[RMDB]
RNA sequence: GGGAACGACUCGAGUAGAGUCGAAAAUCAUUAGGUUGCCUAAUUUGGGUAACAAGUGCAGUGCGUCCUAGUGGCUCUGAGUGAGGGUUCCGUCCCCUCUCAUCCAUUACAAACGCCCUUUGCCAGUCUAUGCAUGCACCUUCGGGUGCAUGCAUAGAAAAGAAACAACAACAACAAC
Reactivity to 2A3 in 0.01 (KOAc 150mM, MgCl2 10mM, bicine 150mM(pH8.5), 24C), signal-to-noise 3, nucleotides 027 to 126: u040c020a010u030u060a100g020g140u000u020g000c010c010u150a300a260u210u170u300g010g010g010u000a010a010c020a050a000g080u070g000c010a000g010u000g010c000g000u000c010c020u020a000g000u000g010g000c000u000c010u000g040a030g010u000g010a300g040g000g000u300u100c070c090g130u210c020c000c000c000u000c000u000c000a030u050c000c000a000u000u010a010c050a000a080a010c000g010c000c000c000u030u090u170g000c000c020a040g050u040